Source: RMDB library OK2TRN, as collected in RNAgym. Chemical mapping of a 177-nucleotide RNA with 2A3 and DMS. For DMS the reverse transcriptase was MarathonRT. The 2A3 profile rests on 6,112 reads. Values are in units of 0.01, from 0 to 300, in steps of 10.
[RMDB]
RNA sequence: GGGAACGACUCGAGUAGAGUCGAAAACUCGUGGGCUGAUUCAGUCCUCUAGGGCACACGCCAUUGUGGCUCUGACUCGUCACACGGAGAAGUGUGUGGUAGUUGACGCCCCAGGGCUCCUCCGUGAGACCAGUGUUACAUUCGUGUAACACUGGUCAAAAGAAACAACAACAACAAC
Reactivity to 2A3 in 0.01 (KOAc 150mM, MgCl2 10mM, bicine 150mM(pH8.5), 24C), signal-to-noise 5, nucleotides 027 to 126: c010u010c020g020u050g000g040g000c010u030g050a300u300u220c070a000g010u000c000c000u010c040u050a030g000g030g000c060a060c020a020c270g060c040c040a080u060u240g070u080g030g010c010u000c030u030g070a060c030u010c060g040u070c060a020c000a000c070g050g000a050g010a090a040g040u030g010u030g010u070g100g020u070a120g080u070u200g060a070c140g010c010c000c010c020a040g090g090g000c010u000c020c010u000c010c000g010u030g030a060
Reactivity to DMS in 0.01 (KOAc 150mM, MgCl2 10mM, bicine 150mM(pH8.5), 24C), signal-to-noise 4, nucleotides 027 to 126: c030u010c040g020u000g000g030g000c010u010g010a200u000u000c060a030g030u000c010c010u000c060u020a070g020g010g000c010a110c080a070c120g000c130c150a110u000u000g010u000g010g000c020u000c030u000g010a080c110u000c110g010u000c090a160c000a030c010g010g000a040g010a040a030g000u000g010u000g010u010g010g010u000a050g020u010u000g010a110c180g000c000c010c020c030a090g010g000g000c000u000c010c000u000c010c010g010u000g000a170